The record gives the reactivity of an RNA of 177 nucleotides to DMS and 2A3. The RNA was probed in 150 mM KOAc, 10 mM MgCl2 and 150 mM bicine (pH 8.5) at 24 C. Reactivities are given for positions 27 through 126. It was measured as part of the RMDB library OK1LIB. For 2A3, 11,350 sequencing reads were counted.
RNA sequence: GGGAACGACUCGAGUAGAGUCGAAAAAUUAAUACAGCUUUUUUCAGAGAACAGUAAAACAUUGUCUUGGUUCUUGGGUGAGUAAGAGCAGAAGGGACACUUUUGGUGCCGUGGCAUCUCUUGGCAGCUAUGAUUCGUAAUUCGUUACGAAUCAUAGAAAAGAAACAACAACAACAAC
Reactivity to DMS in 0.01 (KOAc 150mM, MgCl2 10mM, bicine 150mM(pH8.5), 24C), signal-to-noise 7, nucleotides 027 to 126: a070u030u020a050a070u020a090c100a130g000c040u000u000u000u010u030u020c070a150g010a050g000a050a040c060a050g000u010a060a070a060a070c170a060u010u000g020u000c040u000u010g010g020u000u010c020u000u000g000g000g020u010g000a070g020u000a050a050g000a050g020c060a070g010a060a050g020g010g000a100c100a050c060u000u000u020u010g010g000u010g020c050c050g000u010g000g010c100a030u010c030u000c020u000u010g000g010c080a100g010
Reactivity to 2A3 in 0.01 (KOAc 150mM, MgCl2 10mM, bicine 150mM(pH8.5), 24C), signal-to-noise 9, nucleotides 027 to 126: a000u150u110a030a040u130a100c050a050g040c050u090u100u050u060u030u160c070a040g040a010g040a160a030c040a060g080u210a040a070a060a040c070a130u090u140g030u040c020u050u090g060g010u070u010c000u030u070g050g030g020u090g020a060g030u070a120a020g010a020g060c030a010g050a090a050g030g020g030a020c010a050c070u090u110u120u160g060g010u040g010c010c020g030u050g030g010c020a060u010c020u000c010u070u040g050g010c020a010g010